[RMDB]
Conditions: 150 mM KOAc, 10 mM MgCl2 and 150 mM bicine (pH 8.5), 24 C. The record gives the reactivity of an RNA of 177 nucleotides to DMS and 2A3. The 2A3 profile rests on 1,430 reads. Source: RMDB library OK1LIB, as collected in RNAgym.
RNA sequence: GGGAACGACUCGAGUAGAGUCGAAAAGUGCAGCAGCUGACUUAUUAGGUCAACCACUUUACAAAUAUUUAGGUGGAUUUAAUGGUAAGCAGUUACCAGUACCAAUGAUGAACAUCGUUAAUGGUGGCACCCUCCUGGAAUUCGUUCCAGGAGGGUGAAAAGAAACAACAACAACAAC
Reactivity to DMS in 0.01 (KOAc 150mM, MgCl2 10mM, bicine 150mM(pH8.5), 24C), signal-to-noise 1, nucleotides 027 to 126: g000u030g000c090a050g020c060a010g000c000u000g000a110c100u000u010a020u000u000a050g000g000u030c020a110a000c000c000a050c040u010u010u000a090c220a070a030a040u090a080u010u010u000a040g000g000u000g000g010a190u000u010u000a010a010u000g010g000u000a000a000g020c050a100g040u000u000a030c000c010a020g000u060a170c030c020a080a170u070g030a060u080g000a020a130c070a040u040c010g010u010u000a110a270u010g000g030u000g000g010
Reactivity to 2A3 in 0.01 (KOAc 150mM, MgCl2 10mM, bicine 150mM(pH8.5), 24C), signal-to-noise 3, nucleotides 027 to 126: g060u080g000c000a030g000c020a020g000c050u010g140a260c070u110u050a020u000u080a050g210g010u060c030a000a010c000c000a040c000u060u100u200a160c160a000a200a150u220a200u200u300u130a050g000g000u000g040g020a040u000u230u080a150a020u100g020g020u000a010a010g030c020a030g050u030u060a050c010c010a050g070u020a030c000c050a080a080u070g050a060u060g010a010a060c020a110u030c020g000u060u100a090a020u270g040g030u010g030g020

For DMS the reverse transcriptase was MarathonRT.